[RMDB]
RNA sequence: GGGAACGACUCGAGUAGAGUCGAAAAGAUAUGGAACACGAAGAACAUCUUGUUCGAGGAUCUCGGAAACGAGGGAGAACUUGAUGGGAGUGUUCCUAAGUCAAAGAUGCAUCUUCGGAUGCAUCAAGGAUUGUGAUGUCUUCGGACAUCACAAUCCAAAAGAAACAACAACAACAAC
Reactivity to DMS in 0.01 (KOAc 150mM, MgCl2 10mM, bicine 150mM(pH8.5), 24C), signal-to-noise 1, nucleotides 027 to 126: g000a120u000a300u000g040g000a000a030c000a010c000g020a190a050g000a200a190c030a040u000c000u010u000g000u000u000c000g000a090g010g000a020u000c000u010c000g000g010a130a080a210c000g000a030g000g010g000a010g000a040a010c000u000u000g000a000u000g040g000g000a140g000u000g030u010u000c000c010u000a060a050g000u000c050a070a070a200g000a000u000g000c000a000u000c010u000u010c230g020g030a010u000g000c000a000u000c000a020a050
Reactivity to 2A3 in 0.01 (KOAc 150mM, MgCl2 10mM, bicine 150mM(pH8.5), 24C), signal-to-noise 1, nucleotides 027 to 126: g040a030u120a020u140g030g000a010a010c000a000c050g180a300a080g130a110a000c010a030u020c000u000u030g040u060u030c000g030a160g010g000a010u000c000u000c040g040g020a160a090a050c020g000a020g020g020g010a010g000a000a010c020u000u060g000a030u000g000g000g050a030g000u010g010u000u000c000c000u020a120a030g000u040c040a000a030a210g000a010u010g020c020a000u000c000u080u050c300g170g000a000u000g000c020a010u010c000a000a000